Notes:
Structure probing data (DMS and 2A3) for a 177-nucleotide construct. Conditions: 150 mM KOAc, 10 mM MgCl2 and 150 mM bicine (pH 8.5), 24 C. For DMS the reverse transcriptase was MarathonRT. For 2A3, 950 sequencing reads were counted.
RNA sequence: GGGAACGACUCGAGUAGAGUCGAAAACAUUUUUUAUGUAGGGCUCGAUCAGUGGGCGUAAGCUCAGGUCGAUUGCUCUAAUGGUUUGGUUUGUGACCUGGUUGCUCGCUGAGAGUUGAACCAUUGGCUAAAUAAUUAUUUUCGAAUAAUUAUUUAGAAAAGAAACAACAACAACAAC
Reactivity to DMS in 0.01 (KOAc 150mM, MgCl2 10mM, bicine 150mM(pH8.5), 24C), signal-to-noise 2, nucleotides 027 to 126: c020a020u020u040u030u040u050u030a050u020g010u010a040g000g010g010c020u000c010g000a020u000c000a120g020u020g020g000g000c000g000u060a070a100g020c000u010c000a060g000g010u000c000g000a040u020u040g020c010u000c010u000a040a010u010g010g010u000u000u000g010g020u010u000u010g000u000g000a130c030c020u010g010g000u000u010g000c000u010c020g010c220u030g000a220g000a010g000u000u000g000a030a020c000c010a040u030u020g000g000
Reactivity to 2A3 in 0.01 (KOAc 150mM, MgCl2 10mM, bicine 150mM(pH8.5), 24C), signal-to-noise 1, nucleotides 027 to 126: c010a020u220u170u040u000u080u050a130u220g080u030a010g010g010g000c010u010c010g010a060u020c020a030g190u090g000g010g000c010g010u040a000a110g010c000u000c010a000g000g000u000c010g020a030u000u170g020c030u000c000u000a020a000u030g020g000u020u010u070g040g020u030u060u010g050u050g020a000c000c010u000g000g000u030u010g000c010u000c010g000c090u070g070a030g000a000g040u010u060g010a010a000c000c000a020u010u100g000g000